[RMDB]
RNA sequence: GGGAACGACUCGAGUAGAGUCGAAAAUCAUUUGGCUGAUGGUGGUGAUUUGCUCACAUCCUCCUCUCUCCCUGUCAUCCUCCGGGGCUGAGAAUCAGGUCAGCUAAUGACUUUGGUUAUCAGUCUCACUCUCACACCUCUGUGGAGACCUUGACAGGAGGGUUUUCAUUUUCGAAUGAAAACCCUCAAAAGAAACAACAACAACAAC
Reactivity to 2A3 in 0.01 (KOAc 150mM, MgCl2 10mM, bicine 150mM(pH8.5), 24C), signal-to-noise 1, nucleotides 027 to 156: u100c030a060u030u020u140g050g000c040u000g040a010u000g000g050u000g000g050u050g050a140u090u060u140g040c030u030c010a040c000a110u010c000c080u010c030c000u010c000u000c010u050c000c000c000u010g000u040c030a070u030c020c040u090c040c060g000g000g000g000c000u000g000a010g010a010a000u010c000a000g000g020u040c030a020g030c250u260a140a220u030g010a000c000u300u300u070g010g030u030u030a050u070c000a000g010u000c000u000c000a010c000u070c000u050c000a070c000a050c010c050u110c060u160g050u060g030g000a010g010a060c010c080u080u010g000a030c000a020g080